[RMDB]
Source: RMDB library OK3TST, as collected in RNAgym. An RNA of 207 nucleotides, treated with DMS and 2A3 and read out base by base. The RNA was probed in 150 mM KOAc, 10 mM MgCl2 and 150 mM bicine (pH 8.5) at 24 C. For 2A3 the reverse transcriptase was SuperScript II with manganese. Values cover nucleotides 27 to 156. For DMS, 3,844 sequencing reads were counted.
RNA sequence: GGGAACGACUCGAGUAGAGUCGAAAAAUCUCAUUCUCUUCCUUAGUGUCCACGAUGGAAUUGGUUGAGCAAUGUGCUCCUUGCACUAGAAAUAGUUAUUCAAUGAGAGGCCAGAUAACCAUCAUUCAAGAAAACUGGUUAUUUACUCCAAGCAUCAGAAAAUGGUAAUCUUCGGAUUACCAUUUUCAAAAGAAACAACAACAACAAC
Reactivity to DMS in 0.01 (KOAc 150mM, MgCl2 10mM, bicine 150mM(pH8.5), 24C), signal-to-noise 2, nucleotides 027 to 156: a100u010c010u010c000a160u000u000c050u000c020u020u010c020c000u000u000a100g030u010g030u010c070c030a100c060g000a170u010g010g020a100a110u000u010g020g000u000u000g000a080g050c040a100a100u000g010u000g010c030u000c070c040u000u020g000c020a050c040u010a120g010a110a060a130u000a080g020u000u000a120u000u020c040a050a050u010g000a080g010a130g030g000c080c050a080g010a040u000a030a000c000c000a060u010c050a140u000u000c100a100a180g000a120a090a060a090c110u000g000g010u010u000a050u000u000u010a070c020u000c000c000a080a130g030c060a100u000c060a250
Reactivity to 2A3 in 0.01 (KOAc 150mM, MgCl2 10mM, bicine 150mM(pH8.5), 24C), signal-to-noise 4, nucleotides 027 to 156: a000u000c000u000c000a030u060u010c010u010c000u020u040c000c020u090u130a080g060u100g140u170c060c040a090c170g160a170u300g020g000a030a030u080u050g020g020u030u020g010a000g020c070a020a090u070g000u030g040c020u040c030c000u040u100g020c030a030c090u030a040g110a030a110a060u100a030g020u110u150a090u250u240c140a080a080u110g030a050g000a020g220g040c090c060a030g010a040u010a020a010c010c010a000u090c020a060u170u210c090a120a050g100a110a130a050a020c060u010g000g000u010u010a010u010u040u070a030c010u000c000c000a030a030g040c030a090u160c080a080